The record gives the reactivity of an RNA of 177 nucleotides to DMS and 2A3. The reactions ran in a buffer of 150 mM KOAc, 10 mM MgCl2 and 150 mM bicine (pH 8.5), at 24 C. It was measured as part of the RMDB library OK1LIB.
RNA sequence: GGGAACGACUCGAGUAGAGUCGAAAAGCUCGGAGACGAGCAAGGCUGACAAAACCCUGUCCCCACCUCCACGUGGUGUCGGCUGGAUAAUGCUGCAUUAUGUUGCAUUUAUCAACUGGGAAGAAAAGAUACGGCAGUAUUUCGAUACUGCCGUAUCAAAAGAAACAACAACAACAAC
Reactivity to DMS in 0.01 (KOAc 150mM, MgCl2 10mM, bicine 150mM(pH8.5), 24C), signal-to-noise 4, nucleotides 027 to 126: g000c010u000c000g000g000a220g010a200c000g010a010g010c000a110a090g000g000c030u010g010a060c050a070a070a070a090c050c010c030u000g000u010c050c010c000c010a050c040c020u010c030c030a080c110g010u000g000g020u010g000u010c010g000g000c050u020g000g010a000u010a000a000u000g000c000u000g000c010a190u040u050a130u030g020u000u000g010c010a000u010u010u020a030u000c040a040a090c070u010g000g020g000a110a050g020a070a030a070a130
Reactivity to 2A3 in 0.01 (KOAc 150mM, MgCl2 10mM, bicine 150mM(pH8.5), 24C), signal-to-noise 9, nucleotides 027 to 126: g000c000u000c000g030g010a110g010a060c010g000a000g000c000a000a030g020g000c010u020g010a020c020a040a170a080a130c020c010c000u010g060u070c050c030c000c000a010c000c030u050c010c030a120c090g020u050g020g010u020g010u020c010g010g000c010u040g030g000a010u020a030a000u020g010c020u040g000c010a080u100u110a130u300g020u030u020g000c010a020u040u080u100a060u050c020a020a050c030u070g010g030g020a070a090g080a040a110a010a010